This 177-nucleotide RNA was probed chemically with 2A3 and DMS. For DMS, 2,361 sequencing reads were counted. DMS adducts were read by reverse transcription with MarathonRT. The data come from the RNA Mapping Database (RMDB), library M2PK90.
RNA sequence: GGGAACGACUCGAGUAGAGUCGAAAAAAGGUGCCAUCAUAUCGGUUAAGAACUCUUAACUCUGAUGGCUUUCGAGUUAUGUGGUGCAUUGAAGCUCUGCCUUCAAAUGGUCGUACAGUUCCGUGAAUGUAGUCCAUUGUUUCGACAAUGGACUACAAAAAGAAACAACAACAACAAC
Reactivity to 2A3 in 0.01 (KOAc 150mM, MgCl2 10mM, bicine 150mM(pH8.5), 24C), signal-to-noise 1, nucleotides 027 to 126: a000a000g100g030u050g040c050c010a000u010c010a010u060a060u270c040g000g000u000u020a020a020g060a260a210c080u110c000u300u010a000a020c000u000c020u070g010a010u000g000g020c000u010u060u020c000g000a020g000u090u110a120u120g100u070g000g020u110g110c020a030u020u000g020a020a010g000c010u030c150u300g000c040c020u060u000c010a020a070a140u010g050g010u000c020g000u050a050c040a080g010u000u010c010c010g050u040g160a060a100
Reactivity to DMS in 0.01 (KOAc 150mM, MgCl2 10mM, bicine 150mM(pH8.5), 24C), signal-to-noise 3, nucleotides 027 to 126: a090a070g010g000u000g020c000c010a000u000c000a090u010a070u000c300g000g000u020u000a000a010g000a260a160c300u000c000u000u000a010a010c000u000c120u000g010a020u000g000g020c010u000u010u000c030g010a050g010u000u010a060u010g010u000g010g010u010g020c000a080u000u010g000a030a040g000c010u020c200u000g020c160c000u000u000c010a020a040a060u010g010g000u010c050g000u000a060c060a080g000u000u000c040c040g000u010g010a080a130